This 207-nucleotide RNA was probed chemically with 2A3 and DMS. For 2A3, 1,257 sequencing reads were counted.
[RMDB]
RNA sequence: GGGAACGACUCGAGUAGAGUCGAAAAGCUAGAUUUUGCCAUAGGCGUGUCGUCGUCGACAAGUUACGCCGAGAAAUGGGGCCUUUAUUUUUGGCAGAAAAAUAAUGAAGGCCGUGCUGUAUUUAGAAUCUGUAAGUGGGAUGCAAGUGCACAAACCAUAACAGUACUCUUUCGAGAGUACUGUUAUAAAAGAAACAACAACAACAAC
Reactivity to 2A3 in 0.01 (KOAc 150mM, MgCl2 10mM, bicine 150mM(pH8.5), 24C), signal-to-noise 2, nucleotides 027 to 156: g030c030u070a030g000a290u100u150u100u100g020c000c000a030u070a080g010g000c020g030u050g010u030c070g020u030c060g060u050c040g030a010c020a090a040g050u140u080a020c000g000c000c010g020a040g020a030a120a020u130g000g040g030g010c000c000u070u040u020a020u030u080u040u060u060g050g030c020a030g150a050a120a010a020a030u100a010a040u050g010a030a000g000g000c020c010g010u050g000c030u040g000u100a120u030u110u080a030g010a040a040u020c060u030g020u070a060a040g050u050g040g040g010a010u070g020c050a070a050g050u040g020c010a030c030a040a100a040c030c050
Reactivity to DMS in 0.01 (KOAc 150mM, MgCl2 10mM, bicine 150mM(pH8.5), 24C), signal-to-noise 2, nucleotides 027 to 156: g020c040u020a130g030a130u000u000u010u040g020c010c010a130u020a150g010g040c050g030u020g000u000c040g010u000c270g010u000c040g010a060c010a050a090g020u000u000a050c060g010c030c020g000a170g020a050a040a110u010g050g020g000g020c010c010u000u000u000a040u030u000u000u010u000g010g000c050a220g020a000a080a150a040a050u000a030a090u000g010a020a030g010g020c000c020g000u010g000c040u000g010u000a060u030u000u000a080g000a070a110u000c030u010g020u010a070a110g030u010g020g020g000a110u010g000c030a050a140g000u000g030c040a070c010a080a060a080c070c030